[RMDB]
RNA sequence: GGGAACGACUCGAGUAGAGUCGAAAAUGCCAACAUUCUCCUGGGAGCCUCCAUCAUCAGCCUGAGCUGGAGCGCUUGGGGAGAUUGGCAAAGCUGGUGGCCUGUGGCAUAGCCAUUUUCUAACGGGGAACAGAGACACCAACCUCACUGGUCUCUAUCUUAGGUCAUUUUUCGAAAUGACCUAAGAAAAAGAAACAACAACAACAAC
Reactivity to 2A3 in 0.01 (KOAc 150mM, MgCl2 10mM, bicine 150mM(pH8.5), 24C), signal-to-noise 3, nucleotides 027 to 156: u060g010c010c000a040a030c050a190u150u010c010u040c000c010u120g130g270g000a000g000c010c020u010c020c000a020u030c020a060u020c020a080g250c110c130u160g040a000g000c000u010g020g000a010g000c160g000c010u010u010g000g000g010g000a010g010a010u010u000g000g000c010a050a040a010g090c090u090g010g020u020g030g040c000c030u090g020u070g060g000c020a090u070a050g000c010c000a060u160u080u100u100c080u100a100a110c070g000g010g000g030a010a060c040a080g020a010g010a040c010a010c040c030a020a030c010c030u080c040a040c070u060g010g000u020c000u020c000u000a060
Reactivity to DMS in 0.01 (KOAc 150mM, MgCl2 10mM, bicine 150mM(pH8.5), 24C), signal-to-noise 1, nucleotides 027 to 156: u000g000c020c020a030a110c110a180u020u020c000u010c010c030u050g030g000g000a100g000c040c030u080c020c020a100u000c010a110u010c040a250g000c150c300u050g000a040g040c000u010g000g020a100g000c060g020c010u010u020g000g040g000g010a040g020a090u020u000g010g010c020a020a020a090g000c020u000g020g020u000g010g000c020c000u000g010u000g000g000c040a120u000a130g080c010c020a100u000u000u000u000c060u000a150a080c070g000g000g010g030a150a100c040a020g010a080g020a080c000a060c000c020a020a040c060c060u000c050a090c060u000g020g000u000c000u000c020u000a170

An RNA of 207 nucleotides, treated with 2A3 and DMS and read out base by base. For 2A3 the reverse transcriptase was SuperScript II with manganese. The data come from the RNA Mapping Database (RMDB), library OK3TST. The RNA was probed in 150 mM KOAc, 10 mM MgCl2 and 150 mM bicine (pH 8.5) at 24 C.